[RMDB]
RNA sequence: GGGAACGACUCGAGUAGAGUCGAAAACAUGCCGGAACUCGACGCCGACAAGACGCCGUAUAACCCCUUCGAUCUUACCAAAGUAUGGCCCCAUGCCGACUAUCCGCCGAUCGAUAUUGGCGUGAUACGCGUACUAGUACUUCGGUACUAGUACGCGAAAAGAAACAACAACAACAAC
Reactivity to 2A3 in 0.01 (KOAc 150mM, MgCl2 10mM, bicine 150mM(pH8.5), 24C), signal-to-noise 1, nucleotides 027 to 126: c010a010u060g000c020c030g030g030a020a000c030u040c070g010a020c060g030c010c060g000a010c100a010a070g050a070c030g020c010c000g000u120a090u130a200a130c030c010c000c000u030u050c080g150a110u000c020u050u040a030c040c000a090a020a050g040u060a170u090g080g000c000c030c000c000a040u090g020c000c000g020a030c020u010a010u030c010c030g000c040c040g000a060u060c040g080a010u020a030u300u030g000g010c020g050u080g000a010u050a110
Reactivity to DMS in 0.01 (KOAc 150mM, MgCl2 10mM, bicine 150mM(pH8.5), 24C), signal-to-noise 2, nucleotides 027 to 126: c040a130u010g000c020c040g010g010a130a070c070u000c100g010a110c140g030c000c000g000a020c130a060a100g000a120c050g000c020c000g040u000a090u020a130a090c020c010c000c050u000u010c050g000a080u000c020u040u000a170c070c080a070a040a030g010u000a040u040g000g000c020c080c020c080a010u000g020c050c080g050a080c110u000a030u010c000c020g020c010c040g000a020u000c300g010a110u000a120u000u000g000g020c000g010u010g060a030u000a050
Conditions: 150 mM KOAc, 10 mM MgCl2 and 150 mM bicine (pH 8.5), 24 C. An RNA of 177 nucleotides, treated with 2A3 and DMS and read out base by base. For 2A3, 913 sequencing reads were counted. 2A3 adducts were read by reverse transcription with SuperScript II with manganese. DMS adducts were read by reverse transcription with MarathonRT. Source: RMDB library OK2TST, as collected in RNAgym.